Annotation: Structure probing data (DMS and 2A3) for a 177-nucleotide construct. The data come from the RNA Mapping Database (RMDB), library M2PK50. The 2A3 profile rests on 3,301 reads.

[RMDB]
RNA sequence: GGGAACGACUCGAGUAGAGUCGAAAAGUCCCAUACUUCGGUAUGGGACAAAUAAACUUGACUAAAGCCUGUCAAGAAUCACCACAGGCAAACUGGUGUAAAAAACUAACUUGUUCGCAAGUUAGAACUAACUUUAUUCCUUCGGGAAUAAAGUUAGAAAAGAAACAACAACAACAAC
Reactivity to DMS in 0.01 (KOAc 150mM, MgCl2 10mM, bicine 150mM(pH8.5), 24C), signal-to-noise 2, nucleotides 027 to 126: g000u000c000c000c000a000u000a010c010u000u010c180g020g000u000a000u000g000g000g000a000c000a000a040a080u010a070a080a080c000u010u000g000a010c020u000a030a020a050g000c010c010u000g020u000c000a020a020g000a300a150u010c030a020c020c000a040c140a120g020g010c210a040a050a120c180u000g010g000u000g010u010a000a070a060a070a100a080c000u000a000a000c000u000u000g000u000u020c180g040c000a000a000g000u000u000a000g000a060a150
Reactivity to 2A3 in 0.01 (KOAc 150mM, MgCl2 10mM, bicine 150mM(pH8.5), 24C), signal-to-noise 2, nucleotides 027 to 126: g000u000c000c000c000a000u000a000c010u000u060c250g120g010u000a000u000g010g000g000a000c000a000a010a000u030a000a060a030c000u000u020g020a000c010u030a060a030a010g140c020c020u010g000u000c000a000a000g020a040a070u080c010a010c020c000a040c030a060g300g030c120a070a050a020c050u040g000g030u040g010u070a110a080a040a020a000a020c000u000a000a000c000u000u030g010u110u100c190g010c120a000a000g000u000u000a010g010a010a010